Annotation
Structure probing data (2A3 and DMS) for a 177-nucleotide construct. DMS adducts were read by reverse transcription with MarathonRT.
RNA sequence: GGGAACGACUCGAGUAGAGUCGAAAAUUGGGACGGGAGGCGGGGGUUUUGUUCGCAGGCUCCUUCUUCCCGCUCCUGGUUCUACGCGGCGUGCGCUGUACCACCAUCGGUGGUUAUGGCGCUUACCAGAGAUAUGAUUGUUCGCAAUCAUAUCUCUAAAAGAAACAACAACAACAAC
Reactivity to 2A3 in 0.01 (KOAc 150mM, MgCl2 10mM, bicine 150mM(pH8.5), 24C), signal-to-noise 4, nucleotides 027 to 126: u100u090g010g000g020a000c010g000g010g000a010g030g010c040g000g000g020g010g030u020u040u190u060g050u030u060c150g000c140a010g000g000c000u000c000c000u010u000c010u010u010c000c000c000g010c010u000c000c010u010g010g000u010u000c010u050a050c020g020c030g070g000c050g040u080g010c000g000c000u000g010u020a000c000c000a000c000c010a300u220c300g000g010u000g000g010u050u060a010u010g010g000c000g000c000u000u030a010c000c010
Reactivity to DMS in 0.01 (KOAc 150mM, MgCl2 10mM, bicine 150mM(pH8.5), 24C), signal-to-noise 1, nucleotides 027 to 126: u030u040g020g000g000a050c010g010g010g000a020g020g020c050g000g020g000g000g000u000u000u040u000g000u000u020c160g010c040a000g000g010c000u010c000c000u000u010c000u000u010c000c010c000g000c050u000c000c000u000g020g000u000u000c020u000a100c060g000c070g010g010c050g040u020g010c010g000c020u000g020u000a010c000c020a000c000c000a140u050c270g020g050u000g000g000u040u000a000u000g010g000c000g030c000u010u020a010c070c080

High 2A3 reactivity points to a flexible backbone, as in loops and unpaired stretches.
The DMS profile rests on 4,688 reads.